[RMDB]
RNA sequence: GGGAACGACUCGAGUAGAGUCGAAAACAAACCUUCAGGUCUAAAAACCAUGGUUGUGUCUGCGGGUCAAGAGCAAACUAACUGUAAUACUAGUUCCUUAGCUUAUUACGAACCUGUGCAGGGUCGUCCAGAGACGUGUUCGCACGUCUCAAAAGAAACAACAACAACAAC
Reactivity to 2A3 in 0.01 (KOAc 150mM, MgCl2 10mM, bicine 150mM(pH8.5), 24C), signal-to-noise 8, nucleotides 027 to 129: c010a010a050a010c000c000u130u120c080a070g020g000u010c080u220a060a060a030a020a000c020c010a050u060g030g010u040u080g040u010g030u060c030u040g020c010g030g010g010u080c030a050a020g010a020g050c020a020a020a080c040u100a030a030c050u090g070u190a030a060u050a140c040u010a020g050u080u100c020c000u060u030a040g030c020u060u050a060u070u040a070c060g030a060a040c010c020u030g050u050g050c040a020g000g000g010u020c000g010u000c000c010a010
Reactivity to DMS in 0.01 (KOAc 150mM, MgCl2 10mM, bicine 150mM(pH8.5), 24C), signal-to-noise 6, nucleotides 027 to 129: c080a020a050a050c050c030u040u030c130a110g030g050u010c050u080a050a040a050a120a040c060c000a000u050g020g030u040u010g070u030g050u030c050u030g000c010g000g030g070u030c080a070a050g010a080g060c000a070a040a090c150u060a060a110c060u020g030u070a120a060u030a070c070u000a060g050u000u080c040c100u020u050a000g020c090u070u020a030u010u040a060c120g000a060a060c070c050u000g020u050g080c070a100g000g040g010u020c060g000u020c090c040a160

Overview: Chemical mapping of a 170-nucleotide RNA with 2A3 and DMS. For 2A3, 16,855 sequencing reads were counted. The reactions ran in a buffer of 150 mM KOAc, 10 mM MgCl2 and 150 mM bicine (pH 8.5), at 24 C. Values cover nucleotides 27 to 129.